Description: Structure probing data (DMS) for a 177-nucleotide construct. Conditions: 150 mM KOAc, 10 mM MgCl2 and 150 mM bicine (pH 8.5), 24 C. For DMS, 823 sequencing reads were counted.
RNA sequence: GGGAACGACUCGAGUAGAGUCGAAAAUGAAGUCAAGACUGAAAUUCUAGGCCCUCCCACAAUAAACGAUGACAGAAUGGUUGAGUUCGUAAGGGAAGUUGCCCAGGGACUCGGGCUGAAAGUGGGAGUCUUAAACCGGUUUCGACCGGUUUAAGACAAAAGAAACAACAACAACAAC
Reactivity to DMS in 0.01 (KOAc 150mM, MgCl2 10mM, bicine 150mM(pH8.5), 24C), signal-to-noise 1, nucleotides 027 to 126: u010g010a190a130g020u020c060a100a120g020a040c120u010g020a070a040a080u010u010c050u000a120g020g000c010c060c010u000c000c010c010a010c050a040a080u010a030a140a020c140g010a130u020g020a110c100a080g010a090a070u020g000g040u000u000g020a080g010u010u000c010g020u020a070a280g020g000g010a040a100g000u020u020g000c000c010c010a230g000g000g000a020c010u000c040g000g000g000c020u000g000a010a050a110g010u000g000g000g000a050

Annotation: For DMS the reverse transcriptase was MarathonRT.